[RMDB]
RNA sequence: GGGAACGACUCGAGUAGAGUCGAAAACGACGGCCGCGACGUCUGGACCGACGAGGCGGCGAUGCGCCCGGCGAGCGCGAUCCUGCACGCGCAUCUCGGCCGUCCCGCCGACGUCCUCGACGCGGGACACGCAGCACGGUUUCGACCGUGCUGCGUGAAAAGAAACAACAACAACAAC
Reactivity to DMS in 0.01 (KOAc 150mM, MgCl2 10mM, bicine 150mM(pH8.5), 24C), signal-to-noise 2, nucleotides 027 to 126: c100g000a070c040g030g000c020c010g000c030g020a140c020g020u000c110u030g000g060a100c070c080g000a060c050g020a300g010g020c010g000g000c170g000a010u000g010c190g020c090c050c040g050g000c090g010a070g020c030g000c020g000a050u020c110c080u040g000c030a250c090g010c030g000c020a100u000c020u000c100g000g000c000c050g000u020c000c010c000g000c000c000g000a180c150g000u010c000c070u000c040g010a030c070g020c020g000g010g010a140
Reactivity to 2A3 in 0.01 (KOAc 150mM, MgCl2 10mM, bicine 150mM(pH8.5), 24C), signal-to-noise 2, nucleotides 027 to 126: c020g070a010c040g070g050c000c010g000c010g010a080c010g060u070c160u080g060g010a060c030c070g010a110c100g070a200g000g010c010g000g000c040g000a000u020g040c140g000c040c070c000g000g000c190g020a060g000c040g010c020g050a070u120c000c090u170g010c130a020c050g000c000g040c080a300u010c000u010c010g030g000c000c000g010u000c020c010c000g000c000c000g040a090c010g030u000c050c000u020c000g020a000c030g010c000g000g050g020a030